[RMDB]
RNA sequence: GGGAACGACUCGAGUAGAGUCGAAAAUCUAGACCUUGAGAAUAAGUGAAAAAGACAGCAAAGGGUCCUGUUUUCGUGGAACUUAUAGUCUAGCUUGAGGGGCAUUCUGUAGUCAAGUUUACAAAUAAGGUGAAUUCAAACAGGGAUGAAUGAAGAACACACUUAUUUCCUUCGGGAAAUAAGUGUGAAAAGAAACAACAACAACAAC
Reactivity to DMS in 0.01 (KOAc 150mM, MgCl2 10mM, bicine 150mM(pH8.5), 24C), signal-to-noise 1, nucleotides 027 to 156: u000c010u000a110g000a090c000c000u000u010g000a150g030a120a150u000a140a170g000u000g020a020a140a070a020a080g000a100c010a050g010c070a120a090a080g010g020g030u000c060c020u010g020u020u000u030u010c040g080u000g010g060a130a060c060u000u000a060u000a070g000u000c010u010a090g000c130u010u000g020a130g040g040g000g000c040a060u000u000c030u000g000u000a100g030u000c020a020a020g000u000u000u000a060c020a070a130a140u000a030a090g040g010u000g020a080a030u020u000c060a040a060a070c060a010g010g000g060a100u000g000a080a110u000g000a020a140g020a120a250
Reactivity to 2A3 in 0.01 (KOAc 150mM, MgCl2 10mM, bicine 150mM(pH8.5), 24C), signal-to-noise 2, nucleotides 027 to 156: u000c010u000a020g000a010c000c000u030u120g070a070g050a150a180u230a170a040g050u020g050a040a070a020a050a020g050a050c040a010g040c100a120a030a100g060g060g030u030c010c010u040g090u070u010u080u060c070g030u060g020g060a060a000c000u040u020a040u050a120g050u010c020u010a030g000c050u020u000g060a050g030g020g000g000c010a030u110u050c010u040g120u040a030g020u080c030a080a000g010u040u030u060a070c060a060a140a130u130a040a030g060g000u020g030a080a000u030u050c030a090a040a000c050a060g000g050g000a010u010g000a020a110u070g000a080a070g010a080a020